[RMDB]
RNA sequence: GGGAACGACUCGAGUAGAGUCGAAAAGAUAUGGAUUGUCAUCGAUCGUACGCGACAGGGUGUGGUAUGGCUUCGGAAACGAAGCCAUACCACACCUAGUGUCCAUACGGGAGACAAUCCUAAGUCAGUAAUCAUACCUGUUCGCAGGUAUGAUUACAAAAGAAACAACAACAACAAC
Reactivity to DMS in 0.01 (KOAc 150mM, MgCl2 10mM, bicine 150mM(pH8.5), 24C), signal-to-noise 1, nucleotides 027 to 126: g020a060u000a300u000g000g000a000u000u010g010u010c000a280u030c220g020a110u000c020g020u000a000c030g020c210g000a010c010a060g000g000g040u000g070u010g000g020u000a010u010g000g020c010u010u020c000g030g000a110a050a220c000g030a010a000g000c000c000a000u000a000c000c000a020c000a000c000c010u000a000g020u000g010u010c010c020a050u000a000c010g050g010g030a100g020a020c000a010a010u000c010c010u000a020a070g020u010c020a180